[RMDB]
RNA sequence: GGGAACGACUCGAGUAGAGUCGAAAACGUCGACGUACAUGGAAAGCACGUUGGCAAUUAUGUAUUAUUUUCAGUUUGUUUGCCUUAAUGUCUAAUUUAACUGGUAUCGUCAUCGAUCAUCAACAUAACUAGCUGUUAAAUUCGUUUAACAGCUAGUAAAAGAAACAACAACAACAAC
Reactivity to 2A3 in 0.01 (KOAc 150mM, MgCl2 10mM, bicine 150mM(pH8.5), 24C), signal-to-noise 9, nucleotides 027 to 126: c050g010u020c020g000a000c000g010u050a020c020a140u170g100g120a120a080a000g030c020a010c020g010u010u000g000g000c000a020a030u210u060a120u150g190u020a100u140u030a100u050u200u040u100c050a050g020u020u090u080g060u010u060u080g070c020c000u090u170a140a070u130g030u030c040u050a060a120u110u170u100a080a060c040u050g040g000u070a060u090c020g100u050c060a070u120c050g070a030u040c030a030u040c030a050a090c010a100u090a080
Reactivity to DMS in 0.01 (KOAc 150mM, MgCl2 10mM, bicine 150mM(pH8.5), 24C), signal-to-noise 5, nucleotides 027 to 126: c240g040u000c020g010a020c000g000u000a070c080a100u020g020g020a110a140a120g000c070a000c020g000u000u000g010g020c000a080a070u020u010a090u020g010u010a040u030u010a120u020u020u010u020c050a020g010u020u000u010g000u010u000u010g000c040c030u010u010a080a070u030g000u010c060u010a060a080u030u010u010a050a040c090u000g010g010u010a000u020c020g010u020c110a100u030c040g000a030u010c080a060u030c060a040a040c150a070u020a110
Structure probing data (2A3 and DMS) for a 177-nucleotide construct. It was measured as part of the RMDB library OK1LIB. DMS adducts were read by reverse transcription with MarathonRT.